[RMDB]
RNA sequence: GGGAACGACUCGAGUAGAGUCGAAAAGAGCUUCAAUCUCAUGCGCAGCAUCGGUCCCGCUAUCGGCGGCCUGAUCGUGGCUGCUGCCGGGGCGGCCUUUGCCUUUAUCUUCAAUGCCUUCAGCUAAAAUAAUCCUCGAGUUCGCUCGAGGAUUAUUAAAAGAAACAACAACAACAAC
Reactivity to 2A3 in 0.01 (KOAc 150mM, MgCl2 10mM, bicine 150mM(pH8.5), 24C), signal-to-noise 1, nucleotides 027 to 126: g030a030g010c020u120u130c050a020a130u080c010u020c050a080u230g000c030g000c000a040g000c000a040u020c020g000g000u040c010c070c000g030c020u130a220u300c040g060g000c010g000g060c000c060u110g050a100u100c050g100u100g080g040c040u060g070c020u020g010c010c020g030g000g000g040c030g020g050c010c010u080u030u050g000c000c010u200u220u060a110u080c090u050u010c060a090a050u090g040c000c000u030u080c050a040g010c020u140a120a170
Reactivity to DMS in 0.01 (KOAc 150mM, MgCl2 10mM, bicine 150mM(pH8.5), 24C), signal-to-noise 2, nucleotides 027 to 126: g000a120g010c060u000u000c110a060a090u010c030u000c070a070u010g020c170g010c130a100g000c030a060u010c050g030g000u000c070c030c000g040c160u020a060u000c070g010g030c020g030g030c180c050u030g000a050u010c190g010u000g010g020c040u000g000c050u000g030c120c070g030g000g000g010c090g010g000c020c030u000u010u000g020c030c050u000u020u010a050u010c040u010u000c050a050a060u010g020c020c010u010u010c070a090g000c060u000a070a060